[RMDB]
RNA sequence: GGGAACGACUCGAGUAGAGUCGAAAAACGAGUCCGUACGCGGACUCGAAGGGCCCCAGAAGACCAAGGGGCCCAACCCUACCACUCAUUAGAUGCAUGGAAAUCACUAGGUGAUACGUCACCUAGAACACGCUUUUAAGCUUCGGCUUAAAAGCAAUCUUGUUUCAUGGUUCGCCAUGAAACAAGAAAAAGAAACAACAACAACAAC
Reactivity to 2A3 in 0.01 (KOAc 150mM, MgCl2 10mM, bicine 150mM(pH8.5), 24C), signal-to-noise 1, nucleotides 027 to 156: a000c000g000a020g010u000c010c000g020u030a040c190g020c000g110g030a000c010u000c000g010a000a010g000g010g010c000c000c000c010a100g100a300a100g030a210c030c110a170a130g050g000g040g040c010c000c000a000a000c000c000c000u040a020c000c010a020c030u130c000a080u130u190a030g050a090u180g100c120a020u060g050g090a100a070a030u080c030a070c060u000a000g000g000u010g000a000u020a040c130g020u000c000a010c000c010u010a000g010a010a020c080a040c080g000c000u000u010u000u000a010a000g000c040u000u010c170g100g000c000u000u010a000a000a000a020g000c000a000a000